[RMDB]
Background:
This 177-nucleotide RNA was probed chemically with DMS and 2A3. The DMS profile rests on 895 reads. DMS (dimethyl sulfate) methylates the pairing face of unpaired adenines and cytosines. Conditions: 150 mM KOAc, 10 mM MgCl2 and 150 mM bicine (pH 8.5), 24 C. 2A3 adducts were read by reverse transcription with SuperScript II with manganese. Values cover nucleotides 27 to 126.
RNA sequence: GGGAACGACUCGAGUAGAGUCGAAAAGAUAUGGAUCCCGACAGCAACAGCUAUACAUCGGAAACGAUGUGAUAGACAUGCUGAAGGGAUCCUAAGUCAAAGUGAUAUCCGUUCGCGGAUAUCACAAGUCUUGUUAGCGGUUCGCCGCUAACAAGACAAAAGAAACAACAACAACAAC
Reactivity to DMS in 0.01 (KOAc 150mM, MgCl2 10mM, bicine 150mM(pH8.5), 24C), signal-to-noise 1, nucleotides 027 to 126: g000a010u000a100u020g020g000a000u000c000c010c000g010a300c040a000g010c030a100a110c300a190g000c000u000a000u000a020c000a000u000c020g000g020a010a050a030c000g010a010u000g020u000g000a060u000a010g000a000c060a300u000g010c000u000g010a150a300g000g000g010a000u010c000c000u000a010a080g010u000c010a120a190a110g000u000g010a020u000a010u000c000c000g000u000u000c300g070c050g000g010a000u000a000u000c000a000c010a050a100
Reactivity to 2A3 in 0.01 (KOAc 150mM, MgCl2 10mM, bicine 150mM(pH8.5), 24C), signal-to-noise 1, nucleotides 027 to 126: g000a010u000a010u070g060g000a000u000c060c010c000g000a020c000a000g000c050a040a300c070a160g000c010u010a000u020a020c000a010u010c000g030g000a030a000a000c000g020a010u010g010u040g010a010u000a000g030a030c030a260u300g060c000u010g000a000a020g000g000g000a010u000c000c000u000a010a000g050u050c130a210a040a090g010u000g000a000u000a000u000c010c000g000u040u090c300g010c020g130g010a000u000a000u000c000a010c000a000a000